Source information:
Chemical mapping of a 177-nucleotide RNA with 2A3. It was measured as part of the RMDB library RFM100. 2A3 adducts were read by reverse transcription with SuperScript II with manganese.
[RMDB]
RNA sequence: GGGAACGACUCGAGUAGAGUCGAAAAUGAUGCUUGGUAUCAAUAUGAUACCUCUGUGUGUUCAGCAGACCCUCGCUGGAUUCAUGGAACCUCUUCUACACGUCGACAAGAUAUGUUUCUUGUAUUUAUACGCUAUUUGCUUCGGCAAAUAGCGUAUAAAAGAAACAACAACAACAAC
Reactivity to 2A3 in 0.01 (KOAc 150mM, MgCl2 10mM, bicine 150mM(pH8.5), 24C), signal-to-noise 1, nucleotides 027 to 126: u110g000a000u150g140c020u030u060g000g000u000a000u000c000a170a300u300a170u300g000a000u000a020c000c000u000c000u000g000u000g000u000g000u000u000c000a000g030c040a000g000a280c140c000c000u000c130g000c000u000g010g020a000u000u000c000a000u000g040g000a000a040c000c000u020c000u060u000c000u130a000c010a000c070g140u020c000g080a110c090a070a020g020a190u030a220u090g000u000u010u010c000u110u040g300u040a090u000u000u000